RNA sequence: GGGAACGACUCGAGUAGAGUCGAAAAGGUCGGGAUCCAAAGGACGGACCCAGACCACCUUUGGUUGCAGACCCCUUUCUCCCCCCUCUUCCGAGGCCAGCAGGGGGGCAGGACUUUGUGAGGCGGGUAUUAGCCAUAUGUUCGCAUAUGGCUAAUAAAAAGAAACAACAACAACAAC
Reactivity to 2A3 in 0.01 (KOAc 150mM, MgCl2 10mM, bicine 150mM(pH8.5), 24C), signal-to-noise 2, nucleotides 027 to 126: g040g000u030c050g020g020g130a080u070c040c030a060a060a060g110g010a070c150g040g080a020c060c050c010a060g140a040c020c010a040c020c000u060u030u050g050g040u040u090g070c040a020g030a090c010c000c020c090u010u050u030c070u050c020c000c000c030c000c000u050c000u050u000c020c000g010a030g030g050c000c010a020g040c080a040g000g020g020g010g030g000c000a000g060g030a040c060u060u130u210g090u130g060a050g030g040c050g020g040g010
Reactivity to DMS in 0.01 (KOAc 150mM, MgCl2 10mM, bicine 150mM(pH8.5), 24C), signal-to-noise 6, nucleotides 027 to 126: g000g010u000c010g010g010g010a040u000c010c000a030a060a070g010g010a120c200g010g000a110c050c060c070a100g000a120c020c010a080c020c010u000u010u000g010g010u000u000g000c040a130g000a090c010c010c020c040u000u000u010c020u000c010c010c010c010c010c010u000c040u000u000c090c040g010a070g010g010c030c030a060g030c100a080g000g000g020g010g000g000c080a020g010g010a060c090u010u000u000g010u000g010a060g010g020c080g000g010g010